[RMDB]
RNA sequence: GGGAACGACUCGAGUAGAGUCGAAAACUGGACGAAGCUCUCCAGAGGGAGAUUCAAGCUGCCUUCCGAACUGAUGAAAUCAGGAGAACUCCUCCCACUCCACAAGAUGAAAUGCGAGCAGGGAUGAGGAGUGCAAUACAUUCGUGUAUUGCACUCCAAAAGAAACAACAACAACAAC
Reactivity to 2A3 in 0.01 (KOAc 150mM, MgCl2 10mM, bicine 150mM(pH8.5), 24C), signal-to-noise 2, nucleotides 027 to 126: c000u010g020g020a000c010g080a030a040g030c030u010c000u000c050c040a090g070a080g160g020g000a020g010a000u100u130c090a080a020g040c030u050g060c020c000u060u030c020c010g060a150a120c030u000g060a050u060g100a110a140a100u080c010a010g030g010a080g020a070a020c010u010c000c010u000c010c010c000a000c020u020c000c010a080c050a060a030g080a040u150g080a080a120a050u130g020c050g000a000g000c030a090g000g000g040a020u050g020a030
Reactivity to DMS in 0.01 (KOAc 150mM, MgCl2 10mM, bicine 150mM(pH8.5), 24C), signal-to-noise 3, nucleotides 027 to 126: c040u000g020g040a050c130g000a180a090g010c060u000c000u000c000c030a130g010a200g070g020g000a040g000a100u010u000c160a060a160g020c100u000g040c080c020u010u000c040c070g000a130a110c070u010g000a020u000g020a100a060a300u010c060a110g010g010a180g010a070a080c090u010c020c030u000c020c000c020a160c060u000c020c030a070c100a080a060g000a190u010g010a020a110a070u000g000c170g020a030g020c040a080g000g000g010a030u000g000a110
An RNA of 177 nucleotides, treated with 2A3 and DMS and read out base by base. The reactions ran in a buffer of 150 mM KOAc, 10 mM MgCl2 and 150 mM bicine (pH 8.5), at 24 C. It was measured as part of the RMDB library OK2TST. 2A3 adducts were read by reverse transcription with SuperScript II with manganese.